An RNA of 207 nucleotides, treated with 2A3 and read out base by base. The RNA was probed in 150 mM KOAc, 10 mM MgCl2 and 150 mM bicine (pH 8.5) at 24 C. For 2A3 the reverse transcriptase was SuperScript II with manganese.
[RMDB]
RNA sequence: GGGAACGACUCGAGUAGAGUCGAAAAGGGAUUCUUCGGAAUCCCAAAAAUCCUAAGUCAUUAAUUACAUGCGCCACUGGGAGGCUUCGGAAACGAAGCCUUUGAUCAGUGGAACUACGCACCAAUGAUAUGGAAAAAAGCUCUGUUCGCAGAGCAACCUUAUUUACGACUUCGGUCGUAAAUAAGGAAAAGAAACAACAACAACAAC
Reactivity to 2A3 in 0.01 (KOAc 150mM, MgCl2 10mM, bicine 150mM(pH8.5), 24C), signal-to-noise 1, nucleotides 027 to 156: g030g010g010a000u000u000c000u000u040c120g040g010a030a000u040c030c000c000a020a000a000a010a000u030c010c000u010a030a010g020u000c020a030u030u210a300a050u190u160a270c090a160u070g000c000g010c000c000a000c010u000g000g000g030a000g000g000c000u000u010c010g000g010a080a070a040c000g000a000a040g000c020c060u040u040u010g000a020u000c020a020g000u000g000g030a000a010c000u060a000c000g020c020a020c010c040a040a010u010g010a000u050a080u100g050g000a070a070a040a000a070a020g000c010u020c010u010g000u030u200c240g020c070a010g000a000g000c020a010a010